RNA sequence: GGGAACGACUCGAGUAGAGUCGAAAAUGUGCUCGCUUGACCCGUCUGAUGUGCUGCCGUGGGCACUUGACUGAGAGUGGCAGAGCACUAGGCUAACCCAAAGUGACACAUGCCUGGCGGGAUGUUCGCAUUGUGAUAGGUUCGCCUAUCACAAUGCAAAAGAAACAACAACAACAAC
Reactivity to 2A3 in 0.01 (KOAc 150mM, MgCl2 10mM, bicine 150mM(pH8.5), 24C), signal-to-noise 2, nucleotides 027 to 126: u100g010u020g000c000u000c000g040c040u060u110g110a130c020c030c000g000u000c030u080g150a130u130g040u000g000c010u020g020c020c020g080u090g000g000g000c000a020c000u010u050g020a020c070u060g050a000g010a010g200u150g000g000c080a040g010a000g020c000a000c010u030a020g090g000c030u040a100a090c010c000c000a080a080a000g080u070g070a020c030a000c000a120u090g080c000c000u010g000g020c000g000g030g000a050u060g050u090u050c040
Reactivity to DMS in 0.01 (KOAc 150mM, MgCl2 10mM, bicine 150mM(pH8.5), 24C), signal-to-noise 2, nucleotides 027 to 126: u000g000u000g030c020u010c000g000c050u000u000g020a200c070c000c140g000u000c010u010g010a090u020g010u000g020c000u010g030c040c120g010u030g010g000g000c020a020c020u000u000g010a070c040u000g020a080g010a140g030u000g000g000c010a150g020a000g010c000a030c010u000a060g000g020c230u010a080a130c020c010c040a040a100a060g000u020g010a090c080a070c060a040u000g000c030c000u000g020g010c040g020g000g000a080u010g010u000u010c080

Chemical mapping of a 177-nucleotide RNA with 2A3 and DMS. The 2A3 profile rests on 1,936 reads. Conditions: 150 mM KOAc, 10 mM MgCl2 and 150 mM bicine (pH 8.5), 24 C.